Chemical mapping of a 207-nucleotide RNA with DMS.
RNA sequence: GGGAACGACUCGAGUAGAGUCGAAAAGAUCUCGGUCCCUCAGUAAGGCGGCCAAGUCAUUUUUAACAGUGAGGUGACAUUCAUAGAAGUAACGUGCGGGACUGGAAGCCAUUCUGAAAAAUAAAAAGCACAGCGCAUGCACAAUCACACCAGCACCCUCUAGAUUCAGGUUCGCCUGAAUCUAGAGAAAAGAAACAACAACAACAAC
Reactivity to DMS in 0.01 (KOAc 150mM, MgCl2 10mM, bicine 150mM(pH8.5), 24C), signal-to-noise 1, nucleotides 027 to 156: g020a100u010c010u010c040g040g040u000c000c000c010u050c100a300g000u010a180a030g020g020c070g060g030c060c060a030a060g000u050c080a120u000u040u010u000u030a010a080c100a090g020u010g000a160g000g020u010g010a100c080a230u000u000c060a150u000a100g030a080a180g010u010a180a060c060g020u000g000c010g020g000g010a150c020u010g040g010a120a060g030c010c010a070u000u010c020u010g010a160a070a100a090a150u030a030a020a060a050a070g040c060a060c010a050g030c120g010c050a100u010g010c010a080c040a050a070u000c000a010c020a030c010c040a060g030c030a030c010c050
The reactions ran in a buffer of 150 mM KOAc, 10 mM MgCl2 and 150 mM bicine (pH 8.5), at 24 C.